Structure probing data (2A3 and DMS) for a 177-nucleotide construct.
DMS adducts were read by reverse transcription with MarathonRT.
For DMS, 3,737 sequencing reads were counted.
Source: RMDB library TTRDES, as collected in RNAgym.
2A3 adducts were read by reverse transcription with SuperScript II with manganese.
[RMDB]
RNA sequence: GGGAACGACUCGAGUAGAGUCGAAAAGAUAUGGACGUGUACCAGAUCGAUAAGCUCGUAUCGGAAACGAUACAGAGCUUUUGACGAUCUGACACGUCCUAAGUCAAAAGCGAACUUCGGUUCGCAAUCCCUGUAAUCACUUCGGUGAUUACAGGGAAAAAGAAACAACAACAACAAC
Reactivity to 2A3 in 0.01 (KOAc 150mM, MgCl2 10mM, bicine 150mM(pH8.5), 24C), signal-to-noise 2, nucleotides 027 to 126: g010a010u040a050u140g000g000a000c010g000u000g010u030a230c140c070a000g010a000u020c060g080a110u030a300a000g000c000u000c030g000u000a010u000c000g020g020a080a030a020c030g020a010u020a000c130a130g000a000g000c010u000u020u000u030g040a040c030g000a000u000c000u000g010a010c000a000c010g000u000c000c010u000a000a010g010u000c010a020a030a000a110g010c000g000a000a010c000u040u110c300g140g000u000u000c000g000c010a000a000
Reactivity to DMS in 0.01 (KOAc 150mM, MgCl2 10mM, bicine 150mM(pH8.5), 24C), signal-to-noise 3, nucleotides 027 to 126: g020a040u000a300u010g000g010a000c000g010u000g000u010a140c300c040a010g000a010u000c000g000a170u010a030a020g010c000u000c010g000u000a020u010c000g010g000a120a070a200c000g000a010u000a000c010a090g040a000g000c000u000u000u020u000g010a280c170g010a010u000c000u000g000a020c000a010c010g000u000c000c010u000a010a060g010u020c010a070a080a080a150g010c000g010a010a000c000u000u000c240g060g010u000u000c010g030c010a040a090